Chemical mapping of a 177-nucleotide RNA with DMS and 2A3.
Source: RMDB library M2PK90, as collected in RNAgym.
Values cover nucleotides 27 to 126.
2A3 adducts were read by reverse transcription with SuperScript II with manganese.
For DMS, 1,243 sequencing reads were counted.
RNA sequence: GGGAACGACUCGAGUAGAGUCGAAAAGAAGCGGCCAAAAAUGCGUGUAAAUAAAAGGUCAAUAUGACCUGACAGUGAUACCAAAUUAAAUGGGUCGAAGUCUCGCCAAAAUACGCAACAAAUAGAAACUAAUAUACGGCUUCGGCCGUAUAUUAGUAAAAGAAACAACAACAACAAC
Reactivity to DMS in 0.01 (KOAc 150mM, MgCl2 10mM, bicine 150mM(pH8.5), 24C), signal-to-noise 2, nucleotides 027 to 126: g000a140a080g030c060g020g000c060c050a000a050a100a160a100u000g010c070g030u000g000u000a040a080a090u010a070a090a070a060g000g010u000c000a150a150u020a060u000g030a000c000c000u000g010a010c050a030g000u010g000a010u010a080c030c020a020a190a100u010u020a020a100a100u000g000g000g020u000c020g000a100a110g000u010c020u010c070g000c070c070a030a070a060a050u010a010c060g000c030a050a120c120a060a040a070u010a100g010a200a060
Reactivity to 2A3 in 0.01 (KOAc 150mM, MgCl2 10mM, bicine 150mM(pH8.5), 24C), signal-to-noise 2, nucleotides 027 to 126: g050a050a000g090c100g030g030c050c020a050a000a050a050a020u100g010c070g010u040g000u130a010a080a120u130a050a080a060a010g000g000u000c010a070a040u300a150u280g000a010c000c020u040g010a010c010a020g040u040g060a010u150a300c030c000a000a080a000u160u120a010a110a110u110g070g000g000u000c030g000a040a000g000u000c020u000c050g050c010c000a000a110a000a000u100a010c040g050c040a030a040c020a040a230a050u230a050g160a100a140